This 177-nucleotide RNA was probed chemically with DMS and 2A3.
[RMDB]
RNA sequence: GGGAACGACUCGAGUAGAGUCGAAAACAUUGAGAGUGCCACAAGGUAAAUUGGAUUUACCAACAGUCAGAGAAUUAGUUUUUGGAGGCUUAGAAAGAGGUGAAUUGGUCUUAUCUCAUGUCAUCCGCGAAAAGACGUUAUUCGUAACGUCUUUUCGAAAAGAAACAACAACAACAAC
Reactivity to DMS in 0.01 (KOAc 150mM, MgCl2 10mM, bicine 150mM(pH8.5), 24C), signal-to-noise 6, nucleotides 027 to 126: c050a050u010u000g010a030g010a060g010u000g000c030c040a090c150a120a110g000g010u000a010a020a040u000u010g010g030a300u000u000u000a030c010c010a100a090c070a070g010u000c040a100g000a130g010a040a050u010u010a080g020u000u000u000u000u010g000g010a170g010g000c030u010u000a080g000a050a070a070g010a070g010g000u000g010a050a070u000u000g010g010u010c070u000u000a100u000c010u000c020a040u000g010u000c050a120u000c030c060g010
Reactivity to 2A3 in 0.01 (KOAc 150mM, MgCl2 10mM, bicine 150mM(pH8.5), 24C), signal-to-noise 4, nucleotides 027 to 126: c010a010u120u130g030a010g000a000g060u050g020c040c020a060c040a100a050g050g000u060a010a030a070u120u180g160g080a030u030u010u030a030c000c020a020a040c010a030g050u040c010a010g030a000g030a150a060u060u080a090g150u020u020u030u020u100g090g040a050g000g000c010u020u030a050g080a090a140a020g070a030g050g040u090g060a070a110u050u060g030g000u030c020u060u080a130u030c020u030c010a010u020g030u020c020a100u020c030c030g040
Conditions: 150 mM KOAc, 10 mM MgCl2 and 150 mM bicine (pH 8.5), 24 C. For 2A3, 4,507 sequencing reads were counted.